RNA sequence: GGGAACGACUCGAGUAGAGUCGAAAAUGUUGGAUUCGAGUGCAAGAUAUUUGCUUGAAUCAUCUCCAUGACUUGGCAAAACUGCUUUCUUAAGCCAGUAUUCCUUUAGCUCAGGAGGACGUUUGCCAAUCACGUGCGGAUUCGUCCGCACGUGAUUAAAAGAAACAACAACAACAAC
Reactivity to DMS in 0.01 (KOAc 150mM, MgCl2 10mM, bicine 150mM(pH8.5), 24C), signal-to-noise 1, nucleotides 027 to 126: u040g030u040u000g000g010a020u000u000c020g020a050g000u020g030c170a070a070g000a240u070a060u050u030u000g060c010u000u010g000a010a030u000c020a190u000c060u000c000c030a080u010g000a080c030u020u060g000g000c030a000a050a090a080c040u000g000c010u010u000u000c090u030u040a010a070g000c040c000a090g000u030a200u010u000c020c000u000u000u070a120g000c070u030c150a080g000g000a000g020g020a040c100g050u010u000u000g040c000c050
Reactivity to 2A3 in 0.01 (KOAc 150mM, MgCl2 10mM, bicine 150mM(pH8.5), 24C), signal-to-noise 1, nucleotides 027 to 126: u300g080u050u220g100g010a000u010u000c000g050a000g120u030g050c010a000a070g300a300u160a300u080u100u050g030c000u000u050g000a000a000u000c000a000u020c000u000c000c040a230u040g070a080c000u000u000g000g000c040a030a030a050a030c000u000g050c050u000u040u010c040u300u220a010a000g040c040c000a000g090u090a240u040u090c000c000u050u000u100a040g000c120u070c090a030g030g000a000g000g090a040c080g000u010u000u030g050c040c000
The record gives the reactivity of an RNA of 177 nucleotides to DMS and 2A3. Conditions: 150 mM KOAc, 10 mM MgCl2 and 150 mM bicine (pH 8.5), 24 C. The data come from the RNA Mapping Database (RMDB), library OK1LIB. For DMS the reverse transcriptase was MarathonRT. 2A3 adducts were read by reverse transcription with SuperScript II with manganese. Values cover nucleotides 27 to 126.